[RMDB]
RNA sequence: GGGAACGACUCGAGUAGAGUCGAAAAAGCCUAUGGUAAAAUUGGUUUUGCUAUACAGUAUGCCAUUUGGCUUAAAGUCACAGUUGCCAUGAACCUAUUGAUGAUGUUAAGUAAGGACUUACUGAAUGGCAAUACAUAGUAAUAUGUAGUAAUAAUAAAAUCCUACCUCAUUCGUGAGGUAGGAUUUAAAAGAAACAACAACAACAAC
Reactivity to DMS in 0.01 (KOAc 150mM, MgCl2 10mM, bicine 150mM(pH8.5), 24C), signal-to-noise 2, nucleotides 027 to 156: a080g050c000c020u000a060u010g010g050u000a040a030a110a090u000u000g000g020u000u020u010u000g020c090u010a130u000a080c030a070g040u010a130u010g030c000c000a040u000u000u000g020g040c030u000u000a050a080a080g000u000c000a040c050a070g010u000u000g050c030c070a160u010g020a060a120c060c040u000a160u000u010g010a090u010g030a040u010g050u010u010a020a110g010u010a060a080g010g010a100c050u000u000a060c010u010g000a060a000u000g010g010c030a030a060u000a010c000a020u000a030g000u020a120a200u000a010u010g000u000a050g010u010a050a110u010a050a110u010a120
Description
This 207-nucleotide RNA was probed chemically with DMS. For DMS the reverse transcriptase was MarathonRT.